[RMDB]
RNA sequence: GGGAACGACUCGAGUAGAGUCGAAAACGUCGCCGGUUUGUUCGGCAAAGGCGAUCGCGCGGCCGAUCUGGCCCCAGGCGCCCCAGGCGAUGGAGGUGGCUGGUAGGUCUUGGGCUCGCCGCCAGUGACGCAGUCGCAUAUUCGUAUGCGACUGCGUAAAAGAAACAACAACAACAAC
Reactivity to DMS in 0.01 (KOAc 150mM, MgCl2 10mM, bicine 150mM(pH8.5), 24C), signal-to-noise 1, nucleotides 027 to 126: c040g030u000c080g000c020c000g050g010u000u010u010g040u000u010c060g010g050c050a040a070a110g000g010c020g000a070u010c100g020c070g000c130g010g000c020c010g000a150u010c080u010g010g000c010c000c000c030a030g000g020c000g010c010c000c010c030a050g010g000c170g000a180u000g010g010a090g010g050u000g010g000c010u000g010g000u000a060g030g000u000c020u010u000g000g000g010c030u000c030g020c010c000g000c010c040a120g000u000g010
Reactivity to 2A3 in 0.01 (KOAc 150mM, MgCl2 10mM, bicine 150mM(pH8.5), 24C), signal-to-noise 1, nucleotides 027 to 126: c020g070u050c040g000c000c010g000g020u080u080u130g150u130u150c000g040g000c060a070a030a020g000g000c010g010a030u090c020g060c010g000c010g050g000c050c020g000a050u030c050u100g020g010c010c000c010c000a000g060g010c010g000c000c000c000c030a060g180g030c090g180a110u050g020g020a120g020g000u060g040g080c040u000g030g060u080a070g020g000u040c020u060u140g080g020g000c030u040c010g000c040c000g010c030c000a050g030u090g090